[RMDB]
RNA sequence: GGGAACGACUCGAGUAGAGUCGAAAAGUGUCAGUACGUACCGCUAGCUAGUGCACGAUCUGGAUCGAUCACAUGAGCUAGUGCUAGUGUCUAGGUACCUAGACACAGCUAGCCAUGGAGUACCUAGUGAAACUGACUCGUUCGCGAGUCAGUUUCAAAAAGAAACAACAACAACAAC
Reactivity to 2A3 in 0.01 (KOAc 150mM, MgCl2 10mM, bicine 150mM(pH8.5), 24C), signal-to-noise 2, nucleotides 027 to 126: g080u090g030u040c040a000g040u040a040c010g010u040a040c020c020g000c040u030a030g020c030u040a020g020u010g100c030a020c090g030a020u000c010u070g090g070a060u100c040g010a030u030c050a000c020a110u030g000a030g040c000u010a000g010u010g000c020u060a100g000u000g000u000c000u000a030g090g050u190a200c030c010u020a000g000a000c000a000c000a010g010c020u000a010g000c000c010a010u010g020g000a050g010u040a020c010c020u000a010g040
Reactivity to DMS in 0.01 (KOAc 150mM, MgCl2 10mM, bicine 150mM(pH8.5), 24C), signal-to-noise 3, nucleotides 027 to 126: g020u010g030u010c060a110g020u010a050c130g000u010a090c080c030g020c060u000a120g000c050u000a050g020u000g000c090a100c090g010a040u000c040u000g000g050a110u010c090g000a090u000c050a190c010a010u000g000a110g020c010u000a000g000u000g010c210u000a050g010u000g000u000c020u000a000g010g010u020a090c250c010u000a010g010a010c000a000c010a060g010c010u000a010g000c000c000a030u010g000g000a120g020u010a050c070c020u030a080g020